Overview:
Chemical mapping of a 177-nucleotide RNA with DMS and 2A3. For DMS the reverse transcriptase was MarathonRT. The RNA was probed in 150 mM KOAc, 10 mM MgCl2 and 150 mM bicine (pH 8.5) at 24 C. For 2A3 the reverse transcriptase was SuperScript II with manganese. The 2A3 profile rests on 3,919 reads.

RNA sequence: GGGAACGACUCGAGUAGAGUCGAAAAUCCAGUACGUUCGCGUACUGGAAAAGUCGCGGGUUGAGGGCGUGUACGGCAGCGCACACACACGACCCUCAAGCCAAAGUCCGUACUUCGGUACGGACAACGACAAGUUCAUGUUCGCAUGAACUUGUCGAAAAGAAACAACAACAACAAC
Reactivity to DMS in 0.01 (KOAc 150mM, MgCl2 10mM, bicine 150mM(pH8.5), 24C), signal-to-noise 3, nucleotides 027 to 126: u000c000c000a010g020u000a000c000g010u010u010c220g050c000g030u000a000c000u000g010g000a010a010a050a110g020u000c150g030c240g000g020g000u000u000g000a020g000g010g010c020g000u000g010u000a090c160g000g000c070a140g020c160g000c090a070c090a110c120a030c010a020c040g000a150c000c010c000u010c000a000a010g000c000c010a060a130a130g010u010c000c000g000u000a000c000u000u000c130g030g000u000a020c000g000g000a000c010a000a050
Reactivity to 2A3 in 0.01 (KOAc 150mM, MgCl2 10mM, bicine 150mM(pH8.5), 24C), signal-to-noise 3, nucleotides 027 to 126: u000c000c000a010g010u000a000c010g020u020u060c200g010c000g110u000a010c010u010g000g010a010a030a000a010g080u040c050g010c110g090g040g010u000u010g000a000g020g010g000c000g000u000g010u030a050c050g050g010c060a150g050c060g020c090a050c000a000c010a000c000a010c130g300a300c020c000c000u010c010a000a000g000c000c000a090a000a000g000u000c000c000g000u000a010c000u010u080c230g060g000u000a010c000g010g010a000c000a000a020